This 207-nucleotide RNA was probed chemically with 2A3. For 2A3, 516 sequencing reads were counted. The reactions ran in a buffer of 150 mM KOAc, 10 mM MgCl2 and 150 mM bicine (pH 8.5), at 24 C. As a SHAPE reagent, 2A3 marks flexible, mostly unpaired nucleotides at the ribose 2'-OH. It was measured as part of the RMDB library M2RFOK. 2A3 adducts were read by reverse transcription with SuperScript II with manganese.
[RMDB]
RNA sequence: GGGAACGACUCGAGUAGAGUCGAAAAGCCAGUCAGAGGGCGCUACCAUGCAAAAUAGGGCUGGCUACUCUUGCACAGAAUCACCUUUCUAUAAUAACCAGUGCAAGAAGGGUUAUUAUACCAUUUAAAAAUCGUGAAUGCUUCGGCAUUCACGAAAGCAGUAUGAAGGCUUCGGCCUUCAUACUGCAAAAGAAACAACAACAACAAC
Reactivity to 2A3 in 0.01 (KOAc 150mM, MgCl2 10mM, bicine 150mM(pH8.5), 24C), signal-to-noise 2, nucleotides 027 to 156: g020c020c000a010g000u000c000a050g030a100g240g090g050c070g000c020u190a180c110c090a180u300g000c020a010a110a060a090u070a130g010g010g050c000u000g000g000c000u010a010c000u010c000u000u010g000c000a000c010a020g070a070a110u060c030a140c050c000u150u270u050c080u080a010u030a000a000u000a000a000c000c000a020g000u010g000c010a000a000g000a000a000g000g000g000u000u000a000u020u010a000u030a030c020c020a230u190u230u300a040a090a050a030a050u030c000g000u000g010a000a000u000g000c010u030u020c220g080g000c000a010u000u000c000a000c000g000a010a000a000